Chemical mapping of a 177-nucleotide RNA with DMS and 2A3. 2A3 adducts were read by reverse transcription with SuperScript II with manganese. DMS adducts were read by reverse transcription with MarathonRT. Reactivities are given for positions 27 through 126. For DMS, 2,627 sequencing reads were counted.
[RMDB]
RNA sequence: GGGAACGACUCGAGUAGAGUCGAAAAGAUAUGGAGUCCAUCCCAGCGAUAAGCUGGUCUCGGAAACGAGACCCAGCUUUUGACGCUGAACUGGACUCCUAAGUCAAAACAUGUGCUUCGGCACAUGGAGUUAUCUAGCGUUCGCGCUAGAUAACUCAAAAGAAACAACAACAACAAC
Reactivity to DMS in 0.01 (KOAc 150mM, MgCl2 10mM, bicine 150mM(pH8.5), 24C), signal-to-noise 3, nucleotides 027 to 126: g000a040u010a300u020g000g000a020g020u000c010c010a030u020c110c190c010a010g020c000g030a160u010a010a030g040c000u000g000g000u000c010u000c000g000g000a100a090a160c010g000a010g010a010c180c080c050a010g020c000u010u000u010u000g000a250c050g010c000u010g010a060a080c260u000g020g000a010c000u000c000c010u010a010a090g000u000c030a130a080a150a300c020a010u000g010u010g000c000u000u040c130g030g000c010a000c010a010u000g010
Reactivity to 2A3 in 0.01 (KOAc 150mM, MgCl2 10mM, bicine 150mM(pH8.5), 24C), signal-to-noise 2, nucleotides 027 to 126: g020a020u090a060u100g010g010a020g000u000c000c000a030u060c090c080c010a010g000c020g090a150u050a250a000g000c000u010g020g000u010c000u010c000g040g040a080a030a030c020g010a010g020a030c080c060c000a000g000c000u010u030u010u140g100a060c030g000c020u000g000a040a030c100u080g000g000a000c000u000c000c000u000a020a010g020u030c030a040a050a080a160c010a000u010g010u000g000c000u080u110c300g180g000c010a010c000a010u000g020